[RMDB]
RNA sequence: GGGAACGACUCGAGUAGAGUCGAAAAUGCGAGAUACGGUGCGCCCAAACAGGGAGUAAUGGCUAUCCUGAGCGCGAUAGCGUUUCAUGAGUACAGAGGGGAUAUUGAAAGCAUAAUAUAUCCCAGUAAUGUCCGUCUCCUUUAACACAAAGUUCAGAACUUUUGGACUUUUCGAAGUCCAAAAGUUAAAAGAAACAACAACAACAAC
Reactivity to DMS in 0.01 (KOAc 150mM, MgCl2 10mM, bicine 150mM(pH8.5), 24C), signal-to-noise 2, nucleotides 027 to 156: u010g030c060g030a150g010a120u000a060c060g000g000u000g040c020g000c030c010c020a030a070a110c170a210g010g020g040a080g000u010a070a070u000g030g000c030u000a040u000c030c010u010g020a050g010c010g070c050g010a130u000a130g000c020g040u000u000u000c040a030u000g010a100g040u020a040c030a120g000a140g020g020g010g040a020u000a030u000u000g010a140a080a220g010c090a030u000a070a190u030a090u000a040u020c000c020c000a130g000u010a030a060u000g010u000c020c040g000u000c000u000c010c000u000u000u000a100a080c090a060c050a070a060a200g010u000u000c050a120g010
Reactivity to 2A3 in 0.01 (KOAc 150mM, MgCl2 10mM, bicine 150mM(pH8.5), 24C), signal-to-noise 2, nucleotides 027 to 156: u120g000c010g000a140g030a050u130a100c060g040g010u060g040c030g060c020c000c020a060a170a020c070a140g000g000g000a000g000u090a090a090u060g040g020c060u070a000u040c020c030u040g050a030g040c050g020c020g140a080u060a130g010c030g000u030u050u010c040a050u060g050a080g040u090a080c000a020g140a230g080g030g000g000a000u010a040u020u070g040a200a030a000g100c000a030u040a240a060u110a000u000a010u010c010c020c040a000g020u040a050a020u080g060u070c000c000g070u020c000u000c010c020u010u120u180a150a000c070a030c010a110a070a050g030u100u120c000a030g000

Chemical mapping of a 207-nucleotide RNA with DMS and 2A3. For 2A3 the reverse transcriptase was SuperScript II with manganese. For 2A3, 792 sequencing reads were counted. The reactions ran in a buffer of 150 mM KOAc, 10 mM MgCl2 and 150 mM bicine (pH 8.5), at 24 C. It was measured as part of the RMDB library OK3TST. DMS adducts were read by reverse transcription with MarathonRT.